[RMDB]
RNA sequence: GGGAACGACUCGAGUAGAGUCGAAAACACUGAUUCGUCAGUGAUGAUCGGGGUCGAGCCGUAUGGAGGGACAUGCUCUGAAGCCUCCACGGAGCAACAGCCUCCCCACCCAUACGUGGCUCGACGGAGGCACCCAUACAGCGCUAUUCGUAGCGAACCGUAUCGUAUUGUUCGCAAUACGAUACGGAAAAGAAACAACAACAACAAC
Reactivity to 2A3 in 0.01 (KOAc 150mM, MgCl2 10mM, bicine 150mM(pH8.5), 24C), signal-to-noise 6, nucleotides 027 to 156: c010a010c000u020g010a040u060u150c230g090u020c100a020g040u020g060a210u070g060a090u140c140g090g000g020g060u010c010g000a000g000c010c020g000u010a000u000g130g040a300g110g010g000a010c020a050u060g000c000u000c000u000g050a080a020g000c010c000u010c000c010a020c020g010g010a000g020c010a030a210c070a150g080c020c050u060c010c000c020c020a300c010c010c010a000u010a010c030g070u160g140g000c000u000c000g000a000c000g000g000a000g010g000c010a030c000c000c010a040u140a140c110a060g070c020g010c020u060a080u160u210c240g120u070a020g010c010g030a070a060
Reactivity to DMS in 0.01 (KOAc 150mM, MgCl2 10mM, bicine 150mM(pH8.5), 24C), signal-to-noise 1, nucleotides 027 to 156: c030a010c010u000g000a070u000u010c210g010u000c010a030g000u010g000a090u010g000a160u000c050g070g020g000g000u000c010g010a000g020c000c000g080u010a040u020g050g000a120g020g080g070a120c090a300u000g000c050u050c010u050g010a040a090g010c030c000u000c000c010a300c000g020g000a030g000c000a080a050c110a140g030c120c050u000c040c030c080c160a230c030c000c000a080u000a020c020g000u000g020g000c030u000c010g010a000c040g020g050a030g010g050c000a090c020c010c000a160u000a170c050a080g020c000g000c010u000a080u000u000c160g000u000a050g010c020g010a020a190